[RMDB]
RNA sequence: GGGAACGACUCGAGUAGAGUCGAAAAAAGAGCACCCAUACAACCAUUCUGUUUUUCACUUUUGGAACAGUAUUCAAUACAUGAUAUGAGGUACUCAACAUUAUAUUAUAGGCUUUAUGGUAGACGAUUUUGCCCAAGUGUAGGAGAAUGUAAGUGAGUAGCUAAAUACGUUCGCGUAUUUAGCUACAAAAGAAACAACAACAACAAC
Reactivity to DMS in 0.01 (KOAc 150mM, MgCl2 10mM, bicine 150mM(pH8.5), 24C), signal-to-noise 2, nucleotides 027 to 156: a050a180g000a070g050c000a090c030c000c040a070u000a070c040a130a160c080c030a210u000u000c000u000g030u000u000u010u010u020c070a140c190u010u000u000u010g030g000a060a060c030a040g040u000a160u000u000c080a100a150u030a150c130a150u000g000a140u000a020u000g020a080g060g050u000a040c060u010c020a050a090c060a060u000u000a060u000a100u000u010a090u000a100g020g000c010u020u000u000a070u000g010g010u010a100g010a080c040g000a180u010u000u000u010g050c070c010c010a010a160g010u000g040u000a040g000g010a070g000a070a040u000g020u000a030a110g000u010g010a160
Reactivity to 2A3 in 0.01 (KOAc 150mM, MgCl2 10mM, bicine 150mM(pH8.5), 24C), signal-to-noise 5, nucleotides 027 to 156: a000a000g050a000g010c020a010c000c000c010a010u050a050c040a060a050c020c050a030u050u030c020u000g050u020u020u020u110u140c080a130c100u160u150u160u190g020g010a020a000c000a020g040u060a040u040u200c110a120a020u070a160c070a090u140g070a050u030a020u070g080a120g000g020u030a020c010u030c030a000a050c010a030u170u220a070u110a030u250u120a100u100a120g040g000c030u070u090u030a050u080g050g020u040a030g000a040c010g030a060u070u020u050u210g020c010c010c000a020a050g040u020g030u100a030g030g030a030g040a080a050u070g030u070a050a060g040u040g070a020